[RMDB]
RNA sequence: GGGAACGACUCGAGUAGAGUCGAAAAAUUUGGGAAUCUGUAACAACGUGGAAUAUAUCAAUCAUGUACCGCAGCGUAAAUUGUAUGAAUUGAUAGUUAAUGCAAAAGCAGCAGUACUUAUUCCCGGCCCUGGGACCCUAUUCGUAGGGUCCCAGGGAAAAGAAACAACAACAACAAC
Reactivity to 2A3 in 0.01 (KOAc 150mM, MgCl2 10mM, bicine 150mM(pH8.5), 24C), signal-to-noise 1, nucleotides 027 to 126: a000u240u200u110g040g000g000a000a010u000c000u030g040u090a080a080c120a040a040c120g000u150g060g040a300a020u300a090u000a000u100c070a050a000u030c000a000u050g050u050a090c000c000g060c060a120g000c040g300u220a000a000a080u120u030g000u120a000u010g070a040a160u000u050g000a000u000a010g100u300u150a020a050u060g000c030a230a060a060a000g010c150a000g000c000a000g030u000a000c000u040u000a050u010u000c000c000c040g090g000

Structure probing data (2A3) for a 177-nucleotide construct. Conditions: 150 mM KOAc, 10 mM MgCl2 and 150 mM bicine (pH 8.5), 24 C. It was measured as part of the RMDB library OK1LIB. Reactivities are given for positions 27 through 126.